[RMDB]
RNA sequence: GGGAACGACUCGAGUAGAGUCGAAAAACUACAACUAGUGAAGUCGUCGAUAUGUUAUCUACAUAUUUACCAAAGCAACCAGAAGGUGUUAUUCUGUUCUAUUCAAAGGGACCUAAAUCUAACAUUGAUUUUAAAAUCAAAAAGGAGAAUACUAUAGUCAAUCGUAAACAUUCGUGUUUACGAUUGAAAAAGAAACAACAACAACAAC
Reactivity to 2A3 in 0.01 (KOAc 150mM, MgCl2 10mM, bicine 150mM(pH8.5), 24C), signal-to-noise 2, nucleotides 027 to 156: a000c070u160a070c040a080a030c000u050a020g050u040g120a080a010g050u100c010g000u000c040g020a030u010a010u030g040u030u090a130u180c080u090a020c010a040u040a030u050u100u020a070c020c010a120a100a020g050c010a030a070c040c030a010g010a070a040g060g000u050g000u070u020a070u130u000c020u020g000u010u000c040u050a090u100u100c060a080a020a010g040g000g020a020c020c000u030a050a080a040u040c050u060a040a000c040a080u070u040g020a050u020u000u050u160a170a230a020a010u030c010a010a040a080a000a000g080g040a050g030a040a030u060a160c080u100a030u060a080g000
Reactivity to DMS in 0.01 (KOAc 150mM, MgCl2 10mM, bicine 150mM(pH8.5), 24C), signal-to-noise 2, nucleotides 027 to 156: a080c030u000a170c020a090a220c060u000a070g000u000g030a150a110g030u000c070g020u020c080g000a070u000a020u010g010u000u000a120u010c170u000a210c040a030u000a060u000u000u000a110c010c080a120a020a090g010c050a100a040c030c010a140g010a090a120g020g020u000g000u000u000a120u010u000c060u000g010u000u000c050u000a080u000u000c030a010a060a060g000g000g010a100c020c030u000a030a100a060u010c000u000a090a120c050a200u000u010g010a020u030u000u000u000a040a070a060a040u010c030a020a040a060a060a150g000g010a130g020a060a050u000a040c030u000a110u000a080g000